[RMDB]
RNA sequence: GGGAACGACUCGAGUAGAGUCGAAAAAUCAAGAACCUUACAGCUAUUAAGCUUAACUUUGGUUAUCUUAAUGGUUUAGCUGUUUCUGACACCACUAUUGUUAGUGGUGCAGUAGUUAGUAAGAAGCUCAACCGCAAUAAUUCGUUAUUGCGGUUGAAAAAGAAACAACAACAACAAC
Reactivity to 2A3 in 0.01 (KOAc 150mM, MgCl2 10mM, bicine 150mM(pH8.5), 24C), signal-to-noise 3, nucleotides 027 to 126: a000u090c050a030a020g060a130a100c010c000u000u010a020c010a010g000c000u020a020u080u050a060a000g070c060u010u010a010a010c010u050u100u300g120g000u020u020a030u050c000u030u050a030a020u010g050g000u050u070u140a010g010c010u030g090u160u170u000c030u000g090a140c010a000c000c020a000c000u040a030u190u300g250u300u060a000g000u020g000g000u000g000c000a000g000u040a010g000u020u010a020g020u020a000a050g020a070a010g060c030
Reactivity to DMS in 0.01 (KOAc 150mM, MgCl2 10mM, bicine 150mM(pH8.5), 24C), signal-to-noise 5, nucleotides 027 to 126: a120u010c090a120a090g000a130a160c140c010u010u000a010c020a290g000c000u000a010u000u000a010a000g010c220u000u000a000a010c000u000u020u010g040g020u000u000a000u000c010u000u000a010a010u000g000g000u000u010u010a060g010c030u000g000u000u010u000c000u000g010a180c000a010c000c000a010c000u000a030u010u010g010u010u000a000g040u000g010g010u000g000c000a020g010u010a030g000u000u000a110g000u000a010a010g000a130a130g020c170
Source: RMDB library OK2TST, as collected in RNAgym. An RNA of 177 nucleotides, treated with 2A3 and DMS and read out base by base. For DMS, 7,676 sequencing reads were counted. For 2A3 the reverse transcriptase was SuperScript II with manganese. For DMS the reverse transcriptase was MarathonRT.